Structure probing data (DMS and 2A3) for a 177-nucleotide construct. DMS adducts were read by reverse transcription with MarathonRT. The 2A3 profile rests on 992 reads. 2A3 adducts were read by reverse transcription with SuperScript II with manganese. Conditions: 150 mM KOAc, 10 mM MgCl2 and 150 mM bicine (pH 8.5), 24 C.
[RMDB]
RNA sequence: GGGAACGACUCGAGUAGAGUCGAAAAGAAGAGAAUAAGUUUGUUAGUGGCGUGUCCGUCCGCAGCUGGCAAGCAAAACCGCAUACAAAGCGGAAUAAAGGACGGCUAAGACGCGAAGAAGACGCGAAAAUUUAUGAGCGUUCGCGCUCAUAAAUUUAAAAGAAACAACAACAACAAC
Reactivity to DMS in 0.01 (KOAc 150mM, MgCl2 10mM, bicine 150mM(pH8.5), 24C), signal-to-noise 1, nucleotides 027 to 126: g030a140a020g010a210g000a140a060u080a130a110g020u030u000u000g000u000u030a300g190u060g060g120c300g000u010g030u120c000c010g010u000c000c000g010c060a060g020c010u020g010g000c300a040a000g020c020a060a020a020a190c000c010g000c000a000u020a160c300a130a130a140g000c000g010g010a130a050u000a030a140a110g010g000a010c000g030g000c130u000a080a050g000a130c050g010c050g010a050a080g050a130a050g000a070c090g020c000g030a060
Reactivity to 2A3 in 0.01 (KOAc 150mM, MgCl2 10mM, bicine 150mM(pH8.5), 24C), signal-to-noise 2, nucleotides 027 to 126: g080a020a010g120a000g060a030a160u210a190a040g020u040u040u050g050u000u210a090g010u090g290g000c000g050u240g190u030c000c020g000u000c000c010g000c030a020g000c000u030g000g040c020a020a000g000c020a000a000a120a000c000c000g000c040a020u110a280c140a090a040a040g010c000g010g080a000a000u120a080a090a000g070g000a010c030g000g000c000u010a040a010g040a030c020g000c030g030a040a060g040a080a000g040a040c010g000c000g000a070